[RMDB]
RNA sequence: GGGAACGACUCGAGUAGAGUCGAAAAGUAAAUACAGGCACCCCACAGUGCUUGCUAUCGCGGCAAUAUCGCCAGUGGUGCUGUCGUGAUGCGGUCUUCGCAUGGACCGCACAAUGAAGAUACGGUGCGGUCAUGCGAUAUUCGUAUCGCAUGACCGAAAAGAAACAACAACAACAAC
Reactivity to DMS in 0.01 (KOAc 150mM, MgCl2 10mM, bicine 150mM(pH8.5), 24C), signal-to-noise 5, nucleotides 027 to 126: g020u020a060a090a100u020a150c050a030g010g000c010a040c020c030c040c130a130c150a130g000u010g000c050u000u010g010c150u010a040u010c110g010c060g000g000c010a070a050u010a040u000c040g030c080c080a100g010u010g020g010u000g000c050u010g000u000c020g000u000g000a040u000g020c000g000g020u020c100u000u010c100g030c120a030u010g020g000a020c000c000g000c010a010c070a070a060u030g010a110a060g000a120u040a040c210g000g010u000g010
Reactivity to 2A3 in 0.01 (KOAc 150mM, MgCl2 10mM, bicine 150mM(pH8.5), 24C), signal-to-noise 8, nucleotides 027 to 126: g080u080a010a090a090u160a040c010a010g030g010c000a020c010c010c020c020a040c020a030g040u030g000c010u070u050g000c030u080a050u160c060g010c010g020g000c020a050a040u040a040u180c040g030c070c070a090g030u110g110g000u030g000c020u020g010u010c010g030u030g020a060u030g000c000g000g000u010c020u090u080c070g070c100a090u150g040g000a010c000c000g030c000a000c010a010a050u170g050a050a050g030a090u080a170c090g040g010u030g020